[RMDB]
RNA sequence: GGGAACGACUCGAGUAGAGUCGAAAAAAAGGUGUCACCCUUGACAAGUUGCGUGAUUAUUUAGCUGACUAUGACGUAGCAGUCACUGCCGGCCCAUUCAUGGAUAAUGCUAUUAAUGUUGGUGGUACUAUUAUUAUCCCUUCGGGGAUAAUAAUAGAAAAGAAACAACAACAACAAC
Reactivity to DMS in 0.01 (KOAc 150mM, MgCl2 10mM, bicine 150mM(pH8.5), 24C), signal-to-noise 3, nucleotides 027 to 126: a040a050a050g000g020u000g000u000c050a060c070c010c040u010u000g010a060c120a060a070g010u000u000g020c050g020u010g020a050u000u000a100u010u000u000a120g010c040u000g010a070c040u000a090u000g010a060c090g020u000a130g020c090a130g000u000c020a050c080u000g010c010c010g020g010c020c050c060a050u000u000c070a050u010g010g000a060u010a060a060u010g000c050u000a050u000u000a060a070u000g010u010u000g010g010u000g010g010u010a110
Reactivity to 2A3 in 0.01 (KOAc 150mM, MgCl2 10mM, bicine 150mM(pH8.5), 24C), signal-to-noise 2, nucleotides 027 to 126: a000a000a010g050g000u040g020u050c000a040c000c010c020u020u060g050a040c050a030a110g040u050u070g020c020g020u020g040a030u050u110a050u060u150u150a040g000c030u030g050a040c020u020a020u130g040a000c030g020u030a040g020c020a000g010u060c010a000c090u060g010c000c010g030g030c020c000c010a000u040u040c040a040u030g040g010a020u020a150a030u140g020c000u060a060u140u080a150a080u120g040u040u020g000g010u020g030g000u020a020

An RNA of 177 nucleotides, treated with DMS and 2A3 and read out base by base. Conditions: 150 mM KOAc, 10 mM MgCl2 and 150 mM bicine (pH 8.5), 24 C.